An RNA of 177 nucleotides, treated with 2A3 and DMS and read out base by base. The RNA was probed in 150 mM KOAc, 10 mM MgCl2 and 150 mM bicine (pH 8.5) at 24 C.
RNA sequence: GGGAACGACUCGAGUAGAGUCGAAAAGUUUCACUGGGCUACUACUACUCAACGCAUUUAUUGUGCGCGGUAGACCGGUGGGCGGCAUUCAACAUUAAGUCAGCUCGAAGUCAAACAAAACCCGCGCACUACUUAGACCUUUCGAGGUCUAAGUAGUAAAAGAAACAACAACAACAAC
Reactivity to 2A3 in 0.01 (KOAc 150mM, MgCl2 10mM, bicine 150mM(pH8.5), 24C), signal-to-noise 9, nucleotides 027 to 126: g020u020u060u200c020a020c020u030g010g020g010c010u030a010c010u010a020c010u030a030c020u080c110a110a070c020g000c030a030u040u110u100a240u220u300g010u010g010c020g000c020g010g000u020a020g010a040c000c000g000g010u050g000g000g010c010g010g010c010a050u060u110c040a090a100c020a090u110u230a160a040g050u070c050a030g010c010u010c010g060a120a020g020u030c030a050a070a120c030a020a110a090a050c000c000c000g000c010g010c010
Reactivity to DMS in 0.01 (KOAc 150mM, MgCl2 10mM, bicine 150mM(pH8.5), 24C), signal-to-noise 7, nucleotides 027 to 126: g010u010u000u020c010a030c030u010g010g010g000c010u000a030c030u010a090c120u010a080c080u010c100a170a200c050g000c030a030u020u020u040a100u050u030g010u000g010c010g010c040g000g010u000a030g000a020c010c010g030g020u010g000g000g010c010g000g000c100a100u020u010c100a080a080c100a110u010u020a080a140g020u000c050a180g010c010u000c000g010a160a050g010u000c020a130a100a100c210a070a050a110a090c050c000c000g010c100g000c080
DMS adducts were read by reverse transcription with MarathonRT.